The record gives the reactivity of an RNA of 177 nucleotides to 2A3 and DMS. For 2A3, 25,526 sequencing reads were counted. 2A3 adducts were read by reverse transcription with SuperScript II with manganese.
[RMDB]
RNA sequence: GGGAACGACUCGAGUAGAGUCGAAAAGAGGAUUCAACGAGCUUCGUAGCAACGAUAGCAACGUAGCUUUUGCUACGACCCGAGCUAUCGAGGGCAGCUACGUCCCAUGCUCGAGGGAAGAAUCCGAAUAUAGGGAUAGUUUCGACUAUCCCUAUAUAAAAGAAACAACAACAACAAC
Reactivity to 2A3 in 0.01 (KOAc 150mM, MgCl2 10mM, bicine 150mM(pH8.5), 24C), signal-to-noise 9, nucleotides 027 to 126: g140a030g000g000a010u010u010c030a080a040c030g000a010g010c010u080u060c020g000u010a000g000c010a040a070c020g010a010u010a010g000c010a040a070c020g010u010a000g010c010u110u190u240u300g010c000u010a000c000g040a040c030c040c020g050a030g000c000u010a010u030c010g020a110g030g150g050c070a060g000c020u010a010c010g030u060c030c050c010a030u130g010c000u000c000g020a090g040g090g070a090a160g000a000a030u000c010c000g000a020
Reactivity to DMS in 0.01 (KOAc 150mM, MgCl2 10mM, bicine 150mM(pH8.5), 24C), signal-to-noise 9, nucleotides 027 to 126: g010a190g010g010a020u000u000c010a120a180c020g000a030g010c010u000u010c010g020u000a010g010c010a150a140c040g000a020u000a010g010c010a130a180c020g010u000a000g000c000u000u010u010u010g020c000u000a000c000g010a100c120c110c130g000a150g010c000u000a010u000c010g010a090g020g020g020c270a130g000c010u000a010c010g000u010c110c080c110a100u010g010c000u000c000g000a110g010g010g010a120a120g000a030a010u000c000c000g010a140